[RMDB]
RNA sequence: GGGAACGACUCGAGUAGAGUCGAAAAAACCCCGUCCCGUGGAGCCGGGCGGGGGACCGUGCCAGGUGGGCAGUUUGACUGGGGCGGUCGCCUCCUAAAAGGUAACGGAGGCGCGCGAAGGUCCGCUAUGAACAAUCAACUUCGGUUGAUUGUUCAUAAAAGAAACAACAACAACAAC
Reactivity to DMS in 0.01 (KOAc 150mM, MgCl2 10mM, bicine 150mM(pH8.5), 24C), signal-to-noise 2, nucleotides 027 to 126: a040a030c000c000c000c010g010u040c020c010c040g010u010g000g010a120g010c130c030g000g000g020c000g000g000g000g000g020a020c030c000g030u010g000c010c010a090g000g040u000g010g000g000c050a070g000u030u040u050g000a130c030u020g030g040g020g010c010g000g000u000c000g000c010c010u000c010c000u020a120a060a100a120g020g000u010a100a140c220g000g000a000g000g000c000g020c130g000c030g000a300a100g000g000u020c010c040g000c170u000
Reactivity to 2A3 in 0.01 (KOAc 150mM, MgCl2 10mM, bicine 150mM(pH8.5), 24C), signal-to-noise 3, nucleotides 027 to 126: a000a000c050c000c000c000g080u170c020c010c010g050u070g090g020a040g120c040c000g000g000g000c000g000g000g000g000g000a000c000c010g020u060g120c010c000a070g070g010u130g030g070g000c040a140g040u110u180u150g080a070c020u010g000g040g030g000c010g000g010u030c010g010c000c000u000c000c000u130a170a150a060a040g180g040u090a110a000c050g010g000a010g000g010c000g010c010g000c020g030a030a000g010g000u010c000c020g000c010u010

Source: RMDB library RFM100, as collected in RNAgym. Structure probing data (DMS and 2A3) for a 177-nucleotide construct. In probing experiments dimethyl sulfate is read out at A N1 and C N3, which are open when not base-paired. The reactions ran in a buffer of 150 mM KOAc, 10 mM MgCl2 and 150 mM bicine (pH 8.5), at 24 C. DMS adducts were read by reverse transcription with MarathonRT.